RNA sequence: GGGAACGACUCGAGUAGAGUCGAAAAACGGGAACUGCUGAGUGCCCCUGACGUCCAGACCCUCCCCCGUCCGGGAGAAUGGAGAUUCGGGAACGUGAAGCAUGGUGGGGACGAAGCCCCCUCCGGGAUGGACACCAGUUCGCUGGUGUCAAAAGAAACAACAACAACAAC
Reactivity to DMS in 0.01 (KOAc 150mM, MgCl2 10mM, bicine 150mM(pH8.5), 24C), signal-to-noise 9, nucleotides 027 to 129: a040c050g000g010g010a080a050c110u000g050c030u000g030a200g000u040g000c020c030c010c030u020g020a090c180g050u000c030c010a060g010a100c180c060c000u000c010c000c020c030c070g050u010c160c130g030g020g020a030g000a050a060u060g040g020a020g020a090u020u030c070g000g000g030a080a050c030g030u000g050a110a080g040c030a030u060g030g040u030g010g000g010g010a010c070g020a160a130g000c030c030c030c040c000u030c000c010g000g000g010a090u070g000
Reactivity to 2A3 in 0.01 (KOAc 150mM, MgCl2 10mM, bicine 150mM(pH8.5), 24C), signal-to-noise 9, nucleotides 027 to 129: a000c020g010g000g010a030a060c050u080g020c010u040g050a040g060u110g090c010c010c000c010u030g040a030c030g160u010c000c000a030g020a090c020c000c000u020c020c000c000c000c030g200u090c050c040g020g010g000a020g010a020a030u090g020g000a050g020a060u060u060c030g020g010g000a070a060c020g060u060g100a080a020g040c050a040u110g060g030u070g010g010g000g000a020c060g050a030a030g020c000c000c000c000c000u000c010c000g010g010g030a060u130g070